[RMDB]
RNA sequence: GGGAACGACUCGAGUAGAGUCGAAAAGCGCUGCCUGCAUAUGGUGGUAAUCCAUGUCAAUACCAUAGAAGCUGCGUUGGGUGGCGGAAGAUUUGUGAAACCGUAUAAUAGGGUAUGGGCAACGCAGCUAUAAUAUUAAAUUCGUUUAAUAUUAUAGAAAAGAAACAACAACAACAAC
Reactivity to DMS in 0.01 (KOAc 150mM, MgCl2 10mM, bicine 150mM(pH8.5), 24C), signal-to-noise 8, nucleotides 027 to 126: g010c030g020c010u000g000c030c010u010g000c150a100u010a030u010g000g020u000g010g010u020a090a080u020c070c050a090u030g010u010c070a110a120u030a080c020c010a040u010a060g000a160a090g010c010u000g000c010g010u000u000g000g000g020u010g010g000c020g010g000a090a090g010a130u010u030u010g010u030g010a150a130a080c020c010g000u010a050u020a100a090u030a090g010g000g010u010a050u010g000g000g010c040a020a020c020g000c020a010g000
Reactivity to 2A3 in 0.01 (KOAc 150mM, MgCl2 10mM, bicine 150mM(pH8.5), 24C), signal-to-noise 5, nucleotides 027 to 126: g060c030g000c010u020g010c020c030u010g000c060a090u040a010u090g010g020u020g030g090u080a010a060u070c050c030a070u070g060u070c040a070a040u030a200c010c020a030u020a120g060a040a030g010c020u010g000c000g020u040u040g020g000g010u070g030g010c030g030g000a070a030g060a110u100u190u150g120u040g030a090a040a010c020c000g050u100a070u030a190a190u120a080g070g000g010u100a080u130g040g020g000c010a010a030c010g000c010a000g000

Structure probing data (DMS and 2A3) for a 177-nucleotide construct. DMS adducts were read by reverse transcription with MarathonRT. The RNA was probed in 150 mM KOAc, 10 mM MgCl2 and 150 mM bicine (pH 8.5) at 24 C. 2A3 is a SHAPE reagent: it acylates the 2'-hydroxyl of flexible nucleotides of all four kinds. Reactivities are given for positions 27 through 126. The data come from the RNA Mapping Database (RMDB), library OK1LIB.